Structure probing data (DMS and 2A3) for a 177-nucleotide construct. The reactions ran in a buffer of 150 mM KOAc, 10 mM MgCl2 and 150 mM bicine (pH 8.5), at 24 C.

RNA sequence: GGGAACGACUCGAGUAGAGUCGAAAAGGACUACCCGUCAGGGUUUAGGCCAUACGGACAGCCGGGUCCACUGCCACAAAGAAAACAAAACAAAACAAAAACAAAACAAAACAAAAACAAAAGAAAAUGAUAUCAUUUAUUUCGAUAAAUGAUAUCAAAAAGAAACAACAACAACAAC
Reactivity to DMS in 0.01 (KOAc 150mM, MgCl2 10mM, bicine 150mM(pH8.5), 24C), signal-to-noise 2, nucleotides 027 to 126: g020g010a030c090u000a030c000c000c000g000u020c300a060g000g000g000u000u000u000a050g000g010c010c030a090u000a220c090g010g000a120c200a170g000c040c000g000g000g020u000c020c070a100c170u000g020c010c000a080c100a100a180a020g000a140a080a010a080c050a020a000a150a070c250a070a070a130a140c080a010a030a050a040a050c120a040a130a080a070c080a080a100a000a210c160a090a020a070a020a020c120a080a070a030a170g000a070a060a030a090
Reactivity to 2A3 in 0.01 (KOAc 150mM, MgCl2 10mM, bicine 150mM(pH8.5), 24C), signal-to-noise 4, nucleotides 027 to 126: g050g010a040c030u040a020c020c000c000g070u120c120a130g030g020g010u060u100u130a060g050g000c000c020a020u040a060c030g050g020a010c020a010g010c030c000g060g000g010u040c000c010a020c030u030g020c010c020a060c060a040a120a010g210a060a100a020a000c080a010a060a020a020c060a020a090a020a010c110a120a120a060a020a040c080a030a120a010a010c050a040a060a010a000c050a040a090a030a020a010c050a060a090a040a020g130a010a110a020a030